The record gives the reactivity of an RNA of 177 nucleotides to 2A3 and DMS.
RNA sequence: GGGAACGACUCGAGUAGAGUCGAAAAGCACGUCGGUUCAGAUGAUGGGCCCGCAUCUGUACGAAAGUGAGACGAAAGUCCAGCCGACGUGCAUGAGCACGCGGGCCCCGUGCUCCUCAGCAAAAGAGAUAGUAGUGGUAUUCGUACCACUACUAUCAAAAGAAACAACAACAACAAC
Reactivity to 2A3 in 0.01 (KOAc 150mM, MgCl2 10mM, bicine 150mM(pH8.5), 24C), signal-to-noise 2, nucleotides 027 to 126: g000c000a000c000g000u000c000g000g010u070u070c010a010g000a020u030g010a040u080g010g000g000c000c000c000g000c000a000u000c000u020g060u090a060c080g150a100a080a040g070u070g030a130g000a040c010g060a130a040a000g000u000c010c010a000g000c000c000g000a000c000g000u000g000c000a000u010g000a000g000c000a000c010g010c070g000g000g000c000c000c000c000g000u000g000c000u000c000c010u090c040a120g050c100a050a110a090a020g150a020
Reactivity to DMS in 0.01 (KOAc 150mM, MgCl2 10mM, bicine 150mM(pH8.5), 24C), signal-to-noise 4, nucleotides 027 to 126: g000c000a000c000g010u000c000g000g010u010u000c010a010g010a000u000g000a060u040g000g010g000c020c000c010g020c000a000u000c000u000g020u000a020c010g000a140a120a100g000u010g000a050g000a010c000g000a120a080a160g010u000c000c000a020g000c000c010g010a030c000g010u000g010c000a000u020g010a210g010c010a010c020g010c200g010g000g000c010c000c000c020g000u000g000c000u000c000c020u010c170a130g020c270a090a080a130a100g010a210
For 2A3, 34,328 sequencing reads were counted. Values cover nucleotides 27 to 126. DMS adducts were read by reverse transcription with MarathonRT. The data come from the RNA Mapping Database (RMDB), library OK1LIB. The reactions ran in a buffer of 150 mM KOAc, 10 mM MgCl2 and 150 mM bicine (pH 8.5), at 24 C.